[RMDB]
The record gives the reactivity of an RNA of 177 nucleotides to DMS. The RNA was probed in 150 mM KOAc, 10 mM MgCl2 and 150 mM bicine (pH 8.5) at 24 C.
RNA sequence: GGGAACGACUCGAGUAGAGUCGAAAAGAUAUGGACGUAUCAGCUCACAACGUCGUGGAGCUCACGCACGUCGGAAACGACGUGAAGAGCGAUGAAACGACGUUGUGAGCUGAGUACGUCCUAAGUCCAAUGGAGUGGUGUUCGCACCACUCCAUUGAAAAGAAACAACAACAACAAC
Reactivity to DMS in 0.01 (KOAc 150mM, MgCl2 10mM, bicine 150mM(pH8.5), 24C), signal-to-noise 2, nucleotides 027 to 126: g000a110u000a300u000g010g010a020c010g000u000a030u000c000a020g000c000u010c000a000c010a010a010c000g000u000c010g000u000g000g010a040g050c000u010c010a060c280g030c000a010c000g010u010c000g030g000a120a070a220c010g000a010c010g030u000g000a080a060g000a010g030c010g020a120u010g000a090a160a000c000g000a010c000g020u000u000g000u000g000a000g010c000u000g000a000g030u010a000c000g020u000c010c000u020a020a050g020u010c050